Chemical mapping of a 177-nucleotide RNA with DMS and 2A3. Reactivities are given for positions 27 through 126. DMS adducts were read by reverse transcription with MarathonRT. For 2A3, 15,889 sequencing reads were counted. The DMS profile rests on 19,974 reads. 2A3 is a SHAPE reagent: it acylates the 2'-hydroxyl of flexible nucleotides of all four kinds.
RNA sequence: GGGAACGACUCGAGUAGAGUCGAAAAUACACUUUACGUGUGGUGGUUUCAUUACUUUGUCCCAAACCAGGCACGCGUAAUUAAAGGCCAGUUUGGCCAGGUCCGCGUUAUCGAUGGUCACCAAUAAACAUACUCUCUGAUUCGUCAGAGAGUAUGUAAAAGAAACAACAACAACAAC
Reactivity to DMS in 0.01 (KOAc 150mM, MgCl2 10mM, bicine 150mM(pH8.5), 24C), signal-to-noise 9, nucleotides 027 to 126: u010a090c090a100c070u000u000u000a040c070g030u000g030u000g010g000u000g000g000u000u000u010c130a100u000u010a090c140u000u010u000g010u010c020c020c020a070a050a030c020c010a040g000g010c100a010c010g010c010g010u000a020a020u000u000a060a090a100g000g010c000c000a120g010u000u010u000g030g010c000c010a040g010g010u000c050c020g010c050g000u000u010a080u010c060g010a090u000g010g010u000c050a080c040c050a060a090u010a060a090
Reactivity to 2A3 in 0.01 (KOAc 150mM, MgCl2 10mM, bicine 150mM(pH8.5), 24C), signal-to-noise 9, nucleotides 027 to 126: u080a000c030a010c050u060u060u060a020c030g000u010g000u020g030g040u010g010g030u000u050u100c070a070u080u150a130c080u160u150u180g070u080c010c010c000a010a000a010c020c020a030g160g080c010a000c000g000c000g010u010a010a010u050u110a140a060a010g010g000c010c010a080g140u130u250u160g060g000c000c010a010g000g040u010c020c010g010c040g040u040u070a120u120c060g040a100u070g010g010u040c020a020c040c020a030a080u140a080a130